[RMDB]
RNA sequence: GGGAACGACUCGAGUAGAGUCGAAAACACAACCUUUUGAGUAAUAUAGUAUCUACACGCUUCUUUAGAAUACAUGAUUCUCAUAUCUUGAAGAUAGCAAGUUUCGUUAUAGAGAUCUGUACCAUUAUAAGUUACCCUCAUUCGUGAGGGUAACUUAAAAAGAAACAACAACAACAAC
Reactivity to DMS in 0.01 (KOAc 150mM, MgCl2 10mM, bicine 150mM(pH8.5), 24C), signal-to-noise 2, nucleotides 027 to 126: c100a130c170a050a090c020c020u000u010u010u000g000a130g000u000a040a090u010a070u010a020g010u000a050u000c050u000a080c080a080c120g000c080u000u000c030u000u000u000a050g010a130a110u000a070c040a050u010g000a030u000u000c010u010c010a020u010a010u020c010u010u000g010a070a060g010a070u010a030g010c120a070a060g000u000u000u000c080g000u010u010a070u040a090g010a030g000a040u010c020u000g000u000a020c040c070a050u040u000a110
Reactivity to 2A3 in 0.01 (KOAc 150mM, MgCl2 10mM, bicine 150mM(pH8.5), 24C), signal-to-noise 1, nucleotides 027 to 126: c000a000c010a010a020c010c000u050u050u050u150g110a070g070u040a000a160u110a050u090a240g030u020a010u040c000u000a000c080a000c220g000c060u090u000c030u090u200u070a170g040a150a030u080a060c020a040u230g020a010u110u020c000u000c060a010u010a010u000c040u090u060g050a010a050g010a070u250a050g090c110a110a080g040u000u000u090c040g000u050u050a080u020a120g040a000g000a020u030c030u040g000u010a000c000c030a060u070u250a120
Source: RMDB library OK2TST, as collected in RNAgym. Chemical mapping of a 177-nucleotide RNA with DMS and 2A3. DMS adducts were read by reverse transcription with MarathonRT.